[RMDB]
RNA sequence: GGGAACGACUCGAGUAGAGUCGAAAAGAUAUGGAGCCUGUUCGAGAACCAUUCGGAAACGAAUGAAGUUCGAUGAGAACUGGCUCCUAAGUCAAACUCCUGACCAAUGUUCGCAUUGGUCAGGAGAGAAACAAUCACUCUUCGGAGUGAUUGUUUCAAAAGAAACAACAACAACAAC
Reactivity to 2A3 in 0.01 (KOAc 150mM, MgCl2 10mM, bicine 150mM(pH8.5), 24C), signal-to-noise 1, nucleotides 027 to 126: g000a000u030a000u050g010g010a000g010c040c010u020g020u020u010c030g030a010g000a050a000c000c000a000u000u020c000g050g000a040a000a000c010g010a000a000u030g020a290a080g000u000u000c040g080a300u040g000a010g000a000a010c000u000g000g010c000u000c000c000u010a000a000g020u000c000a000a020a090c020u000c000c000u000g010a010c000c000a010a010u020g030u060u130c300g030c190a000u000u000g000g000u010c000a000g020g000a000g000a000
Reactivity to DMS in 0.01 (KOAc 150mM, MgCl2 10mM, bicine 150mM(pH8.5), 24C), signal-to-noise 2, nucleotides 027 to 126: g000a030u000a030u020g000g000a010g010c000c000u000g010u000u000c020g000a020g010a000a010c020c000a000u010u000c000g000g010a010a010a010c010g010a020a010u000g000a210a230g020u000u000c010g010a230u010g000a300g010a000a010c020u000g010g010c010u000c000c000u010a000a080g000u000c010a160a170a200c020u000c020c000u000g010a000c000c000a010a000u000g010u000u000c240g020c020a040u000u020g000g010u000c000a000g020g000a000g010a020